An RNA of 177 nucleotides, treated with 2A3 and DMS and read out base by base. DMS adducts were read by reverse transcription with MarathonRT. Reactivities are given for positions 27 through 126. 2A3 adducts were read by reverse transcription with SuperScript II with manganese.
[RMDB]
RNA sequence: GGGAACGACUCGAGUAGAGUCGAAAAUCGGUGGGGUUCGCCCCACCGAAAAGAGAGAAGUGAGAGAGUCGUCAGUGAACGAAAGUGGGAUCCCACGCCACAAAAGAUGCGGCUUCGGCCGCAUCAAGAUAGUAACUUUCUUCGGAAAGUUACUAUCAAAAGAAACAACAACAACAAC
Reactivity to 2A3 in 0.01 (KOAc 150mM, MgCl2 10mM, bicine 150mM(pH8.5), 24C), signal-to-noise 3, nucleotides 027 to 126: u010c010g000g010u000g020g010g010g020u030u010c090g100c000c010c000c000a000c000c000g010a000a000a010a000g060a000g010a000g020a180a030g090u180g070a110g000a010g000a000g080u000c010g010u020c040a070g080u050g150a120a070c070g040a110a080a020g030u030g000g030g020a040u040c010c000c010a000c020g000c020c010a030c010a020a130a000a030g010a010u000g010c030g020g010c010u020u040c220g080g000c000c000g000c000a000u000c010a000a000
Reactivity to DMS in 0.01 (KOAc 150mM, MgCl2 10mM, bicine 150mM(pH8.5), 24C), signal-to-noise 5, nucleotides 027 to 126: u000c000g020g030u000g010g010g020g020u000u020c230g010c000c000c000c000a010c000c000g000a000a010a060a070g000a180g010a070g000a110a090g010u010g000a110g000a190g010a050g010u000c030g020u010c050a090g010u000g010a080a070c130g000a060a080a090g020u000g010g010g000a090u000c020c020c010a080c090g000c020c010a020c040a070a060a080a100g000a010u000g020c000g020g010c010u000u010c220g030g000c000c000g000c000a000u000c000a030a060